[RMDB]
RNA sequence: GGGAACGACUCGAGUAGAGUCGAAAACUCCAACGUCUCAGUGGCGCAGGGAAUCUCGGUGCGGGUGCCGUCGGCGUGCACGGCGAUGUGCGCCACCUUGCCGGCGUCGACGUAGCCGGGGGUGAACACGCCAUCUUAGGUUCGCCUAAGAUGGCGUAAAAGAAACAACAACAACAAC
Reactivity to DMS in 0.01 (KOAc 150mM, MgCl2 10mM, bicine 150mM(pH8.5), 24C), signal-to-noise 1, nucleotides 027 to 126: c090u020c010c040a070a050c150g000u000c010u010c130a170g030u010g010g000c030g020c090a080g000g000g010a060a080u010c030u000c040g000g040u000g000c060g030g030g000u000g020c100c020g010u000c000g010g040c000g000u000g040c120a170c180g010g010c050g010a120u000g000u010g000c020g010c050c020a060c140c040u000u070g020c000c010g000g000c020g010u000c050g000a010c020g000u010a110g030c020c020g010g020g010g040g000u020g010a050a110c240
Reactivity to 2A3 in 0.01 (KOAc 150mM, MgCl2 10mM, bicine 150mM(pH8.5), 24C), signal-to-noise 1, nucleotides 027 to 126: c020u010c010c030a010a040c060g070u070c050u020c150a080g030u070g050g000c000g010c080a060g090g020g030a050a120u050c000u000c000g040g060u030g070c020g010g050g180u110g040c050c000g020u010c020g000g000c010g020u060g040c060a040c090g050g030c070g080a170u190g100u100g150c000g000c080c000a010c030c010u110u250g000c000c010g010g000c010g000u000c010g000a020c000g020u030a060g020c000c020g000g000g000g000g000u150g060a020a010c070